[RMDB]
RNA sequence: GGGAACGACUCGAGUAGAGUCGAAAAAAAGGGCGACUUGGGAGCCUUAGCCUUGAAGUGUGCCAUCGGCAAUCCUCACUAGGUCUGUCUCUUGAAUCCCCUCGGUGGAAGGGCCUCAAGGGACAAACCUUGGCAUUGGCAUAGUCCCUGUAGUAUCCGGACUAUAUCAAUUCGUUGAUAUAGUCCGAAAAGAAACAACAACAACAAC
Reactivity to 2A3 in 0.01 (KOAc 150mM, MgCl2 10mM, bicine 150mM(pH8.5), 24C), signal-to-noise 3, nucleotides 027 to 156: a000a000a000g060g000g000c080g030a070c120u140u110g050g040g020a020g050c000c030u030u030a040g010c010c020u080u100g090a090a040g060u040g040u020g090c020c030a130u110c100g060g000c040a040a130u110c020c050u070c050a060c040u040a000g000g000u000c020u000g000u000c000u010c000u010u020g020a070a090u140c010c000c010c010u020c040g170g040u210g120g010a100a020g000g000g030c010c010u010c000a010a000g000g000g000a000c030a000a000a000c000c000u000u020g030g000c010a060u020u080g000g000c010a020u030a020g060u060c010c000c030u070g060u070a110g080u090a090u150c100
Reactivity to DMS in 0.01 (KOAc 150mM, MgCl2 10mM, bicine 150mM(pH8.5), 24C), signal-to-noise 1, nucleotides 027 to 156: a060a090a050g050g020g010c020g000a060c100u010u020g010g000g020a190g000c020c000u010u000a070g030c020c020u010u010g040a060a040g030u000g030u000g000c000c010a120u000c040g020g020c070a140a150u010c060c020u000c080a080c070u000a010g000g010u000c000u000g010u000c030u010c010u020u010g010a020a110u000c000c000c000c010u000c010g020g010u000g030g000a090a070g000g020g010c180c010u000c020a030a040g010g010g000a020c040a000a020a000c000c000u010u020g050g000c050a230u000u000g010g000c010a120u000a100g000u000c040c000c020u010g030u030a040g010u010a140u010c010